[RMDB]
Structure probing data (2A3 and DMS) for a 170-nucleotide construct. The 2A3 profile rests on 23,821 reads. It was measured as part of the RMDB library 15KLIB. The RNA was probed in 150 mM KOAc, 10 mM MgCl2 and 150 mM bicine (pH 8.5) at 24 C. For DMS, 23,660 sequencing reads were counted.
RNA sequence: GGGAACGACUCGAGUAGAGUCGAAAAUAGACUCCUAUUUUGUCGUUAAGAGGCAUACUAUGGAGAAUUAUGAACUAGAGAAGCACUGUUACGACUUGUUACGUGACUGUGAUGCUGUAGCUCCCCAAUCCUGCAGGGUUCGCCCUGCAGAAAAGAAACAACAACAACAAC
Reactivity to 2A3 in 0.01 (KOAc 150mM, MgCl2 10mM, bicine 150mM(pH8.5), 24C), signal-to-noise 9, nucleotides 027 to 129: u080a010g060a030c000u000c010c000u000a060u030u070u010u010g010u000c040g040u060u090a210a070g120a210g090g010c010a030u030a030c040u070a070u210g010g000a020g000a040a020u160u070a110u130g090a060a020c020u010a010g000a000g010a180a020g020c010a000c010u010g010u000u010a000c020g050a050c090u110u180g160u240u120a050c000g010u000g000a000c000u030g000u000g010a040u080g020c010u040g010u040a000g010c020u030c000c000c000c000a000a050u080c020
Reactivity to DMS in 0.01 (KOAc 150mM, MgCl2 10mM, bicine 150mM(pH8.5), 24C), signal-to-noise 6, nucleotides 027 to 129: u010a060g020a270c020u010c020c020u040a080u030u010u000u010g010u040c020g000u000u010a130a110g030a070g010g050c000a030u030a070c120u030a100u010g000g000a040g040a110a080u020u020a010u050g000a070a080c030u020a040g020a090g030a000a000g030c030a030c020u010g020u000u000a010c020g030a060c110u060u050g060u050u000a110c020g020u020g020a020c010u000g010u040g010a040u020g030c030u030g010u000a000g020c080u030c020c010c020c080a120a050u050c110